[RMDB]
An RNA of 177 nucleotides, treated with DMS and 2A3 and read out base by base.
Values cover nucleotides 27 to 126.
DMS adducts were read by reverse transcription with MarathonRT.
Reactivities are rounded to 0.1 and cut off at 0 and 3.
RNA sequence: GGGAACGACUCGAGUAGAGUCGAAAACGAUGGCACAUAAUACAAACGCAGACGAUCUAUAGCGCCUUACGUCGCGACGGAUAUGCCAGACAGUCACUUAACUAAAAAGGCGUAAUACGAGAAGCGUAAAUAUAUAUAUAUUCGUAUGUAUAUAUUUAAAAGAAACAACAACAACAAC
Reactivity to DMS in 0.01 (KOAc 150mM, MgCl2 10mM, bicine 150mM(pH8.5), 24C), signal-to-noise 5, nucleotides 027 to 126: c060g000a090u010g010g030c020a050c090a070u010a090a050u040a110c160a080a110a080c020g010c020a050g020a090c040g000a090u000c070u010a070u010a120g010c010g000c000c000u010u010a090c080g010u000c060g000c050g010a070c070g000g000a070u010a050u000g000c010c020a050g000a110c130a070g000u010c090a060c100u020u020a080a110c070u030a040a050a070a090a030g000g010c000g020u010a070a070u020a050c090g000a080g000a110a110g010c030g010u000
Reactivity to 2A3 in 0.01 (KOAc 150mM, MgCl2 10mM, bicine 150mM(pH8.5), 24C), signal-to-noise 4, nucleotides 027 to 126: c020g040a040u050g010g070c030a040c010a070u210a190a020u130a290c050a120a110a040c010g000c030a040g010a040c020g010a020u000c030u180a120u100a120g010c000g020c000c000u000u020a010c020g010u000c010g020c020g060a050c010g040g030a040u030a040u160g000c000c000a010g030a120c020a010g060u040c030a020c130u140u100a150a020c010u100a090a060a040a040a000g000g000c000g010u010a020a080u100a080c060g020a010g010a210a000g040c000g000u010